[RMDB]
RNA sequence: GGGAACGACUCGAGUAGAGUCGAAAACAAUUGGGCCUUGUGCCAGAUAAGGAAUUCUUCCGCCUGGGUGCUGUCAUUGAGUCGACCACCAACAAGCUGAGACAGCAGCAGUUGGCGCUAACCGAAGAAGGCCGCGCGGCAAUCGCUGAGGCUGAGGACCAUAAGAAAGCUUCGGCUUUCUUAUGGUAAAAGAAACAACAACAACAAC
Reactivity to 2A3 in 0.01 (KOAc 150mM, MgCl2 10mM, bicine 150mM(pH8.5), 24C), signal-to-noise 2, nucleotides 027 to 156: c050a020a130u140u140g070g020g020c000c020u180u060g080u160g140c030c040a050g050a120u210a050a100g010g020a030a060u120u030c020u060u000c020c030g050c010c030u070g060g000g040u100g030c020u010g020u040c010a020u030u180g010a030g000u050c020g060a100c030c020a010c050c010a060a030c050a060a020g060c050u050g000a020g040a090c020a020g000c010a000g030c010a040g050u080u020g010g000c000g000c060u120a100a060c000c030g040a050a030g070a030a030g130g000c040c020g000c030g010c020g000g000c040a110a030u190c070g010c120u100g020a020g010g000c020u010g010a020g070g040
Reactivity to DMS in 0.01 (KOAc 150mM, MgCl2 10mM, bicine 150mM(pH8.5), 24C), signal-to-noise 2, nucleotides 027 to 156: c060a070a120u000u030g020g020g060c010c040u000u000g020u000g010c020c070a100g030a090u010a110a100g010g020a040a180u000u020c080u020u000c010c020g010c030c010u000g020g030g000u000g010c000u000g030u000c000a220u000u020g000a140g020u000c010g020a140c090c020a050c030c070a070a120c030a030a200g050c020u010g000a250g020a050c050a100g000c010a010g040c010a140g040u000u000g010g010c000g000c070u040a080a110c030c020g000a040a130g000a080a150g000g000c000c030g040c130g000c010g000g030c050a090a090u000c080g010c020u000g000a070g020g010c060u000g020a130g000g010
An RNA of 207 nucleotides, treated with 2A3 and DMS and read out base by base. The 2A3 profile rests on 1,032 reads. DMS adducts were read by reverse transcription with MarathonRT.